Structure probing data (DMS and 2A3) for a 177-nucleotide construct. The 2A3 profile rests on 75,881 reads. The RNA was probed in 150 mM KOAc, 10 mM MgCl2 and 150 mM bicine (pH 8.5) at 24 C. For DMS, 39,750 sequencing reads were counted.
[RMDB]
RNA sequence: GGGAACGACUCGAGUAGAGUCGAAAAGCUCUGCGAGACAGAUCGAACAACAAAGAGAGAUCGAAAAUCUUAGAGGAGAGAACGAAUCUGUCCACUUCACUAGGACAUUGUCGAUCAGAGGUCCAAAGACCAUUCAUUGCUUCGGCGAUGGAUGGUCAAAAGAAACAACAACAACAAC
Reactivity to DMS in 0.01 (KOAc 150mM, MgCl2 10mM, bicine 150mM(pH8.5), 24C), signal-to-noise 9, nucleotides 027 to 126: g020c010u000c000u010g000c040g000a300g000a030c020a080g000a020u010c010g010a300a230c060a060a100c300a080a140a070g010a050g000a300g000a010u000c010g010a070a080a110a240u000c000u000u000a010g000a080g020g020a010g000a080g010a050a010c010g010a110a120u030c130u030g000u000c010c010a070c020u000u000c010a090c010u000a010g000g010a010c120a070u020u020g020u000c010g000a210u000c020a030g010a030g000g000u010c020c020a080a090a100
Reactivity to 2A3 in 0.01 (KOAc 150mM, MgCl2 10mM, bicine 150mM(pH8.5), 24C), signal-to-noise 9, nucleotides 027 to 126: g030c000u000c000u010g010c020g010a040g010a030c010a020g010a020u010c020g050a060a060c030a060a020c040a030a300a010g110a020g010a000g000a020u010c020g040a040a050a020a060u000c010u010u030a030g010a030g060g010a010g010a010g020a050a020c040g050a100a180u110c110u180g040u020c020c010a040c010u040u040c000a010c040u010a010g000g020a010c020a090u050u110g020u010c000g000a010u020c010a010g010a010g030g040u000c010c000a040a020a000

Reactivities are given for positions 27 through 126.